RNA sequence: GGGAACGACUCGAGUAGAGUCGAAAACCCGUUCAUUUCGAUGAACGGGAGUGGGUAACCCUAGGACCAGUAGUGGGACGCGUAGUGGCCGUGGGACCAGUAAAGAGUUAACAUUCGUGUUAACUAAGAUACGUACAACGUUCGCGUUGUACGUAUCAAAAGAAACAACAACAACAAC
Reactivity to DMS in 0.01 (KOAc 150mM, MgCl2 10mM, bicine 150mM(pH8.5), 24C), signal-to-noise 4, nucleotides 027 to 126: c010c000c000g010u000u000c000a000u000u000u020c140g020a030u000g000a010a000c010g020g020g010a040g010u010g010g000g000u000a100a120c030c020c030u000a150g000g000a100c030c030a070g000u000a110g020u000g010g020g000a090c070g000c090g010u010a050g010u010g000g030c050c040g000u000g000g010g000a090c030c020a060g020u010a070a080a110g010a040g010u000u000a010a010c000a040u000u010c220g010u000g000u000u000a000a020c010u000a050a070
Reactivity to 2A3 in 0.01 (KOAc 150mM, MgCl2 10mM, bicine 150mM(pH8.5), 24C), signal-to-noise 3, nucleotides 027 to 126: c000c000c000g000u000u000c010a050u020u020u140c260g150a010u000g000a020a000c010g000g030g010a010g100u110g030g040g030u060a090a130c000c010c000u020a090g050g050a200c010c040a060g050u060a030g040u150g060g090g050a080c040g010c030g080u090a040g130u040g030g000c000c000g020u050g060g000g000a130c010c020a020g030u080a020a160a040g150a000g000u010u010a010a000c020a010u040u140c200g050u060g020u000u000a000a010c000u020a020a050
Structure probing data (DMS and 2A3) for a 177-nucleotide construct. DMS adducts were read by reverse transcription with MarathonRT.